An RNA of 177 nucleotides, treated with DMS and 2A3 and read out base by base. Source: RMDB library OK2TRN, as collected in RNAgym.
RNA sequence: GGGAACGACUCGAGUAGAGUCGAAAACAGGCCGGCCACCGAGUCGAUCACGUGGUGCGGCCGGGUCGCGCUGGCGCCGGCCAGCCAGCGAUCCAGCGUUUGCUGGCGGAACUUGCCGGUGCGCACCUAUAGGUUCCUAUUUCGAUAGGAACCUAUAAAAAGAAACAACAACAACAAC
Reactivity to DMS in 0.01 (KOAc 150mM, MgCl2 10mM, bicine 150mM(pH8.5), 24C), signal-to-noise 4, nucleotides 027 to 126: c130a140g030g020c040c010g010g010c010c010a030c020c030g000a070g010u010c170g000a100u000c030a070c110g000u000g000g020u000g010c000g000g010c000c010g000g010g010u000c010g010c010g010c010u000g000g010c010g010c090c080g010g000c000c000a030g000c010c040a040g010c000g000a060u010c090c120a060g000c020g010u000u020u010g000c000u000g000g010c020g000g000a090a100c140u000u010g010c010c000g000g020u000g000c000g010c080a030c010c010
Reactivity to 2A3 in 0.01 (KOAc 150mM, MgCl2 10mM, bicine 150mM(pH8.5), 24C), signal-to-noise 3, nucleotides 027 to 126: c030a020g030g060c030c010g000g010c010c010a020c010c030g010a030g130u150c050g100a130u060c030a020c080g020u060g000g040u120g150c010g000g000c000c010g000g010g010u010c010g000c010g010c030u010g010g000c010g040c070c050g210g110c020c010a000g000c020c020a010g000c000g000a000u050c020c040a030g100c040g050u080u210u230g010c000u000g000g000c000g000g030a120a130c070u080u150g000c000c010g010g020u040g050c010g000c030a010c010c000
For DMS the reverse transcriptase was MarathonRT. Conditions: 150 mM KOAc, 10 mM MgCl2 and 150 mM bicine (pH 8.5), 24 C. The 2A3 profile rests on 4,435 reads.